[RMDB]
RNA sequence: GGGAACGACUCGAGUAGAGUCGAAAAGAUAUGGAAUGUAAGGCUUUUGACGCUCGGCGGUUCGGAAACGAACCCGAGAGCGAUAAGCCUUGACAUUCCUAAGUCAAAACUGUAGUUCGCUACAGAACUCGAGUACUAGGUUCGCCUAGUACUCGAGAAAAGAAACAACAACAACAAC
Reactivity to DMS in 0.01 (KOAc 150mM, MgCl2 10mM, bicine 150mM(pH8.5), 24C), signal-to-noise 2, nucleotides 027 to 126: g010a020u010a300u020g000g000a010a000u010g000u000a010a020g020g010c000u000u000u000u000g050a230c070g040c000u000c000g010g050c300g010g050u020u000c010g020g010a050a080a210c010g020a040a000c000c020c020g010a300g020a040g040c000g010a050u000a020a010g000c010c010u010u000g030a030c000a020u000u000c000c000u000a010a030g000u010c050a060a030a100a180c020u020g000u000a040g010u000u020c250g020c010u010a020c000a010g010a100a160